[RMDB]
RNA sequence: GGGAACGACUCGAGUAGAGUCGAAAAGAUGGAAUGUUAUACACCAGCAACAGUAAGUGAAUGUUAGGUUUAUGCAGCAACAUGGAUGAAUCUUGAAAACAGAACGUCAGCUAAAAGCAAGUUGCUAGAGCACAAGGUAGUUCGCUACCUUGUGCUCAAAAGAAACAACAACAACAAC
Reactivity to DMS in 0.01 (KOAc 150mM, MgCl2 10mM, bicine 150mM(pH8.5), 24C), signal-to-noise 1, nucleotides 027 to 126: g000a050u060g000g060a130a080u070g000u060u080a030u000a120c090a170c080c040a020g000c000a000a100c120a180g010u000a040a140g040u000g000a100a120u000g000u000u070a070g000g000u000u000u020a020u000g010c080a020g060c010a000a050c210a050u050g000g000a000u020g020a030a050u000c000u000u000g000a160a000a100a000c050a050g000a080a000c040g000u000c170a020g040c030u030a030a020a030a130g000c090a120a190g160u000u000g070c000u000a120
Reactivity to 2A3 in 0.01 (KOAc 150mM, MgCl2 10mM, bicine 150mM(pH8.5), 24C), signal-to-noise 2, nucleotides 027 to 126: g000a000u090g000g030a140a040u030g090u160u100a000u070a120c050a050c040c000a000g070c050a000a010c000a040g070u260a200a100g010u040g220a200a090u090g000u020u070a070g020g020u000u010u210a000u100g010c050a030g000c130a140a060c000a140u070g050g060a000u000g120a080a050u000c000u110u000g010a010a050a000a000c120a000g020a090a020c000g150u080c080a070g000c120u300a040a040a000a000g000c000a130a050g010u000u000g060c000u010a000
An RNA of 177 nucleotides, treated with DMS and 2A3 and read out base by base. It was measured as part of the RMDB library OK1LIB. 2A3 adducts were read by reverse transcription with SuperScript II with manganese. Conditions: 150 mM KOAc, 10 mM MgCl2 and 150 mM bicine (pH 8.5), 24 C.